[RMDB]
RNA sequence: GGGAACGACUCGAGUAGAGUCGAAAAAAAUGAAUCAUGGGGGCAGUUUCCGCCAUCAUGUUCUUAUGAUAGUGAGUGAGUUCUCACAGGAUAUGAUGGUUUUAUAAGGGGCCUUUCCACCUUUGCUCAGCCCUUCUCUCUCUUACUGUCAUAUGAAGGAUUUAAAAUCGUUCGCGAUUUUAAAUCCAAAAGAAACAACAACAACAAC
Reactivity to 2A3 in 0.01 (KOAc 150mM, MgCl2 10mM, bicine 150mM(pH8.5), 24C), signal-to-noise 1, nucleotides 027 to 156: a000a000a050u080g050a030a120u210c100a090u150g000g000g000g020g000c020a010g020u050u160u080c090c080g000c000c040a000u000c000a000u000g040u020u030c020u090u090a130u150g060a130u130a060g010u020g000a000g020u090g060a080g080u180u050c000u000c000a010c030a000g000g010a010u000a010u100g000a010u000g000g020u020u090u070u060a000u000a030a050g030g000g020g020c000c000u020u030u070c000c010a060c010c010u080u120u090g000c070u070c100a060g080c000c000c000u040u040c020u000c000u000c000u000c000u030u150a070c020u010g070u140c010a020u300a070u300g040a120a040